[RMDB]
RNA sequence: GGGAACGACUCGAGUAGAGUCGAAAACAAGGGUACCUUAUCUCGAAUUUUGAUGAGUCAUCGUGUACUUUCAUGCCAGAGGGGACUGUGUGCAGCCAAAAUGCCUUGUACCCGAUGAGUCCUCUGCCCGUCAGGGGGACUUCGGUCCCCCUGACGGAAAAGAAACAACAACAACAAC
Reactivity to 2A3 in 0.01 (KOAc 150mM, MgCl2 10mM, bicine 150mM(pH8.5), 24C), signal-to-noise 2, nucleotides 027 to 126: c020a030a060g000g010g030u000a090c000c000u050u050a110u060c030u000c070g050a280a290u060u300u150u070g190a180u090g000a050g050u080c020a100u040c030g020u020g050u100a010c010u000u010u060c080a080u060g070c050c000a020g000a090g060g020g000g030a060c000u020g000u000g020u010g260c000a000g080c040c020a010a140a000a060u090g000c000c040u000u160g000u000a020c020c020c030g010a110u040g070a000g020u020c000c010u000c060u020g010c000
Description:
The data come from the RNA Mapping Database (RMDB), library OK1LIB. This 177-nucleotide RNA was probed chemically with 2A3. The RNA was probed in 150 mM KOAc, 10 mM MgCl2 and 150 mM bicine (pH 8.5) at 24 C. Values cover nucleotides 27 to 126.